Background: Chemical mapping of a 177-nucleotide RNA with 2A3 and DMS. DMS adducts were read by reverse transcription with MarathonRT. The RNA was probed in 150 mM KOAc, 10 mM MgCl2 and 150 mM bicine (pH 8.5) at 24 C. The DMS profile rests on 1,547 reads.
RNA sequence: GGGAACGACUCGAGUAGAGUCGAAAAGACUACCACCCGGACUGAACGGAAUUUCGCGGGCAUCGGCGAUGUGCGCAUCGUCUACGACGUCUGGACGCCGGACACCGCGCCGCAAGCGGUGGUCGUGUGUGGUAGGGCUUUUCGAAGCCCUACCACAAAAAGAAACAACAACAACAAC
Reactivity to 2A3 in 0.01 (KOAc 150mM, MgCl2 10mM, bicine 150mM(pH8.5), 24C), signal-to-noise 3, nucleotides 027 to 126: g070a000c020u050a000c000c000a020c050c010c040g000g090a050c060u100g010a200a020c010g050g080a140a110u130u210u140c020g020c010g070g020g000c060a080u050c040g020g000c050g020a010u010g060u050g090c140g000c080a020u010c010g010u010c040u020a090c060g100a010c020g010u000c000u000g040g020a030c060g010c100c000g010g000a000c000a000c040c000g000c030g000c000c040g060c050a080a000g010c020g050g000u030g000g000u010c060g000u030g030
Reactivity to DMS in 0.01 (KOAc 150mM, MgCl2 10mM, bicine 150mM(pH8.5), 24C), signal-to-noise 1, nucleotides 027 to 126: g000a120c020u000a060c000c020a120c060c000c000g000g000a120c040u070g020a080a130c000g000g010a140a150u030u030u020c050g000c000g030g000g000c100a090u000c150g000g000c020g000a000u010g000u030g020c070g020c060a020u010c000g020u030c030u010a090c080g010a170c120g000u000c010u000g000g010a100c300g000c030c000g010g000a100c000a040c030c030g000c030g010c110c030g010c050a090a090g000c000g010g050u000g000g000u000c060g000u050g040
Source: RMDB library OK1LIB, as collected in RNAgym. Values cover nucleotides 27 to 126.